Chemical mapping of a 170-nucleotide RNA with DMS and 2A3.
The reactions ran in a buffer of 150 mM KOAc, 10 mM MgCl2 and 150 mM bicine (pH 8.5), at 24 C.
[RMDB]
RNA sequence: GGGAACGACUCGAGUAGAGUCGAAAAAGUGAGAUGAACGACAAGGGGCGAAGAUCCUCGGAAGGAAUUCUCCCAAGAAGCGAAGAGAACACAAGAAUCGGAAGUCUUCCCGAAGACGCCGGGGACAGUAGCUCUAACUUCGGUUAGAGCAAAAGAAACAACAACAACAAC
Reactivity to DMS in 0.01 (KOAc 150mM, MgCl2 10mM, bicine 150mM(pH8.5), 24C), signal-to-noise 9, nucleotides 027 to 129: a110g050u000g000a060g020a070u030g040a140a070c030g000a070c140a070a070g000g000g020g030c110g020a090a060g000a080u040c050c020u000c050g000g030a030a030g020g040a050a080u050u020c050u030c040c030c040a100a080g010a030a030g040c110g020a060a040g030a020g010a070a070c100a010c130a070a040g040a100a070u020c040g040g020a050a050g030u000c020u000u010c030c030c020g000a070a030g000a060c130g000c050c010g000g010g010g000a070c110a000g040u050a070
Reactivity to 2A3 in 0.01 (KOAc 150mM, MgCl2 10mM, bicine 150mM(pH8.5), 24C), signal-to-noise 9, nucleotides 027 to 129: a010g150u150g020a110g010a080u120g030a100a020c030g070a010c070a050a090g010g000g010g020c040g030a040a020g030a080u050c020c010u010c010g000g010a020a010g030g010a020a020u150u010c020u000c010c020c000a050a040g090a070a000g030c050g030a050a010g020a010g010a040a010c020a000c010a120a020g030a060a060u050c040g030g020a040a020g020u000c000u030u030c010c000c010g020a030a020g030a020c040g000c030c020g000g000g000g000a020c020a030g040u070a020